Conditions: 150 mM KOAc, 10 mM MgCl2 and 150 mM bicine (pH 8.5), 24 C.
Structure probing data (2A3 and DMS) for a 177-nucleotide construct.
The 2A3 profile rests on 953 reads.
For DMS the reverse transcriptase was MarathonRT.
It was measured as part of the RMDB library RFM100.
High DMS reactivity at an A or C suggests that its Watson-Crick edge is free.
RNA sequence: GGGAACGACUCGAGUAGAGUCGAAAAAAUUUGAGAUUUUUCAAAAUAGAUUAUUUUAGACAUCCUACUUUAAUCAUUUUUGAUGAAUCAAUACGGUAUUUUUGUCGCUUCCUUAUUACAGUAAUGCACACGAUGUAUGUUUCGACAUACAUCGUGUAAAAGAAACAACAACAACAAC
Reactivity to 2A3 in 0.01 (KOAc 150mM, MgCl2 10mM, bicine 150mM(pH8.5), 24C), signal-to-noise 2, nucleotides 027 to 126: a010a000u080u050u010g030a040g010a010u020u000u000u000u020c010a020a020a000a020u080a080g000a000u020u000a020u000u030u000u020a020g020a060c010a070u190c000c000u000a010c000u030u020u000a020a010u000c000a020u000u010u020u010u000g000a010u010g000a010a000u030c000a000a010u160a040c080g010g070u050a110u030u030u010u080u010g120u050c040g040c090u040u030c000c010u050u140a200u090u110a080c070a040g090u150a110a070u140g040c050
Reactivity to DMS in 0.01 (KOAc 150mM, MgCl2 10mM, bicine 150mM(pH8.5), 24C), signal-to-noise 2, nucleotides 027 to 126: a030a040u020u000u010g010a300g020a050u000u010u000u000u000c000a000a000a010a010u040a300g010a000u030u000a000u000u000u000u000a000g010a110c150a140u040c240c000u000a010c040u000u000u000a020a000u030c020a270u020u000u000u010u000g000a000u000g010a040a000u000c000a000a100u030a140c180g030g000u030a020u010u010u000u000u000g000u010c080g000c130u010u010c000c020u000u010a110u000u030a080c170a120g020u060a050a030u000g010c240